This 177-nucleotide RNA was probed chemically with 2A3.

RNA sequence: GGGAACGACUCGAGUAGAGUCGAAAAUACCAAACCGCACAGUGUACUACCUCGGAACCCUCCAGCCACACCAGCCGGUGGCCAUCGAGACGAGCAUGUACUACAACCCGGCUGGCCUCACCUACUGGAUGCCUGGGGAGUUCGCUCCCCAGGCAUCAAAAGAAACAACAACAACAAC
Reactivity to 2A3 in 0.01 (KOAc 150mM, MgCl2 10mM, bicine 150mM(pH8.5), 24C), signal-to-noise 2, nucleotides 027 to 126: u180a000c000c000a030a120a010c040c000g010c000a000c030a040g030u020g030u130a070c010u020a090c000c010u020c030g050g110a140a120c050c000c010u010c000c000a000g000c000c000a030c000a070c000c000a000g000c000c000g020g070u070g020g010c090c000a050u070c140g050a060g060a100c000g010a020g080c050a080u050g010u040a060c010u080a090c020a050a120c020c110c000g010g000c000u010g010g030c010c040u130c020a070c070c010u250a100c020u030g010
The RNA was probed in 150 mM KOAc, 10 mM MgCl2 and 150 mM bicine (pH 8.5) at 24 C. Values cover nucleotides 27 to 126.